This 177-nucleotide RNA was probed chemically with 2A3 and DMS. It was measured as part of the RMDB library OK2TRN. 2A3 adducts were read by reverse transcription with SuperScript II with manganese.
[RMDB]
RNA sequence: GGGAACGACUCGAGUAGAGUCGAAAAAGCUGCUCGCAAUCGCGCCAAAGGACCCGCGUAGCGCGCGGCGCUAAAUUUACCUGCUCAGGUUGCAAAAAUAGGUCCUUUAUUGAGCAGCCAUAGCAGAAGUAGUAAAUCAUUUCGAUGAUUUACUACUAAAAGAAACAACAACAACAAC
Reactivity to 2A3 in 0.01 (KOAc 150mM, MgCl2 10mM, bicine 150mM(pH8.5), 24C), signal-to-noise 2, nucleotides 027 to 126: a010g000c000u010g000c000u000c000g000c040a100a130u130c020g010c010g050c030c070a090a030a010g010g010a010c010c020c010g010c020g020u020a020g000c010g000c010g010c010g030g000c000g010c040u030a040a060a060u140u140u090a090c010c000u010g010c010u020c050a010g000g000u010u010g000c050a180a020a120a060a100u020a020g010g000u020c000c010u020u020u010a070u030u040g030a030g000c000a000g000c000c010a040u030a010g020c010a000g020a090
Reactivity to DMS in 0.01 (KOAc 150mM, MgCl2 10mM, bicine 150mM(pH8.5), 24C), signal-to-noise 8, nucleotides 027 to 126: a180g010c000u000g010c000u000c000g010c060a160a120u010c050g010c010g020c070c110a030a030a030g020g010a020c010c010c010g020c010g020u000a290g010c020g010c120g010c040g010g010c010g000c090u000a030a070a120u020u010u010a080c140c000u000g010c020u000c200a130g010g020u000u000g020c030a040a070a030a040a030u000a040g000g000u000c010c000u000u000u000a060u010u010g010a180g010c010a010g010c010c010a120u000a050g010c020a030g010a220